[RMDB]
RNA sequence: GGGAACGACUCGAGUAGAGUCGAAAAGCUAUACCGUUCGCGGUAUAGCAAAAUCUUUCCGAGAUGUACUAAUACGAGCCUAUUAGACAACGGUUCGAGUCCAAACGGGUUACUUCGGUAACCCGAACGGAAGCUAAAUGUUCGCAUUUAGCUUCCGAAAAGAAACAACAACAACAAC
Reactivity to DMS in 0.01 (KOAc 150mM, MgCl2 10mM, bicine 150mM(pH8.5), 24C), signal-to-noise 1, nucleotides 027 to 126: g000c010u000a010u000a030c000c000g050u010u010c260g040c000g000g000u000a000u010a000g000c000a010a020a020a050u010c050u000u000u000c000c010g000a130g020a100u000g010u000a110c030u000a020a010u000a060c040g000a100g000c130c130u000a020u020u000a030g000a020c030a040a150c010g010g000u010u000c070g000a030g020u000c030c050a050a070a190c060g010g020g010u010u000a000c010u000u000c230g050g010u010a020a010c000c000c000g010a000a040
Reactivity to 2A3 in 0.01 (KOAc 150mM, MgCl2 10mM, bicine 150mM(pH8.5), 24C), signal-to-noise 1, nucleotides 027 to 126: g010c010u030a010u000a000c020c030g010u000u050c250g010c020g050g010u000a000u000a010g000c000a000a030a000a000u030c010u000u040u000c000c000g070a080g050a150u050g040u090a170c040u060a090a050u020a070c130g110a090g020c030c020u020a030u160u060a100g020a080c020a060a010c080g000g060u050u040c010g020a010g000u020c050c000a090a070a070c040g010g020g000u000u000a000c010u040u040c140g030g010u010a010a000c060c030c010g010a000a010